Chemical mapping of a 207-nucleotide RNA with DMS and 2A3.
Conditions: 150 mM KOAc, 10 mM MgCl2 and 150 mM bicine (pH 8.5), 24 C.
For 2A3, 1,524 sequencing reads were counted.
In probing experiments dimethyl sulfate is read out at A N1 and C N3, which are open when not base-paired.
DMS adducts were read by reverse transcription with MarathonRT.
[RMDB]
RNA sequence: GGGAACGACUCGAGUAGAGUCGAAAAGGAGGCCAAUUCACAAACCUGUUAAUCCACCACAGGAGUCCAGAAUUAUCAUCCAACCUGGGCCUGGUGCAGCAAAUCUCUCUAACAGUAGUGUUAUUACUCUGGCAGAGUCAGCUGCCCUUGCAAAUGAUAGGUGUUACAGAUUCGUCUGUAACACCUAAAAAGAAACAACAACAACAAC
Reactivity to DMS in 0.01 (KOAc 150mM, MgCl2 10mM, bicine 150mM(pH8.5), 24C), signal-to-noise 2, nucleotides 027 to 156: g000g000a050g010g020c030c040a030a040u010u000c040a080c040a050a300a100c010c040u000g030u020u010a060a120u000c060c050a070c030c070a130c060a080g040g010a070g020u000c030c050a090g010a150a120u010u000a120u000c100a150u000c070c040a070a140c050c000u000g030g000g020c050c030u010g020g000u010g080c030a050g030c010a020a110a070u010c010u000c010u010c020u000a070a030c000a020g000u000a020g020u000g000u000u020a130u010u010a030c040u000c010u010g000g040c030a030g000a010g000u000c040a190g010c000u000g040c020c010c010u000u000g000c010a030a080a120u000g000a280
Reactivity to 2A3 in 0.01 (KOAc 150mM, MgCl2 10mM, bicine 150mM(pH8.5), 24C), signal-to-noise 3, nucleotides 027 to 156: g060g010a010g020g040c050c070a030a060u110u080c080a040c050a100a090a080c040c010u020g020u040u060a070a110u040c080c040a050c020c040a020c040a020g020g020a030g030u040c050c010a000g030a050a110u170u080a100u220c070a030u040c010c000a000a110c060c020u010g000g050g000c000c010u000g010g020u160g040c000a010g020c000a010a090a170u110c030u020c010u000c030u080a110a030c010a020g170u300a010g030u120g100u210u060a100u140u080a020c000u020c010u010g030g000c080a000g000a000g010u030c040a010g000c010u010g010c010c000c000u000u040g040c030a010a050a180u140g040a060